[RMDB]
RNA sequence: GGGAACGACUCGAGUAGAGUCGAAAAUCGACGGAUAUGACGGCAGGGUCCUACUACCAUGUGGAUCGGCCAUUCCGGUCCCUGAGUUUCAAGCUUUGAGCGAGAGCGCCACUAUGGUGUACAACGACUGGGUCAACCGAUUCGUCGGUUGACCCAGAAAAGAAACAACAACAACAAC
Reactivity to 2A3 in 0.01 (KOAc 150mM, MgCl2 10mM, bicine 150mM(pH8.5), 24C), signal-to-noise 1, nucleotides 027 to 126: u060c040g080a060c010g020g030a020u080a020u260g180a070c040g030g040c020a040g130g020g090u050c020c010u080a040c000u080a140c020c060a040u200g050u090g050g000a000u010c000g010g020c000c000a000u140u020c010c010g040g000u010c000c000c000u030g040a050g020u050u120u080c040a070a040g000c030u140u160u300g030a070g010c000g000a030g080a010g000c030g020c030c000a040c040u160a110u230g000g010u060g020u070a030c040a070a000c110g080a060
Reactivity to DMS in 0.01 (KOAc 150mM, MgCl2 10mM, bicine 150mM(pH8.5), 24C), signal-to-noise 1, nucleotides 027 to 126: u000c160g000a140c030g020g000a030u000a090u030g000a130c140g000g010c040a030g020g020g000u020c040c040u000a030c110u010a080c230c100a040u010g040u030g000g030a020u010c020g030g000c170c030a220u020u000c120c020g000g000u010c000c020c040u010g000a170g000u000u000u000c130a170a240g000c040u000u000u010g030a070g030c040g000a130g060a090g010c010g030c020c040a080c120u000a060u000g040g030u000g000u000a070c130a070a110c040g030a110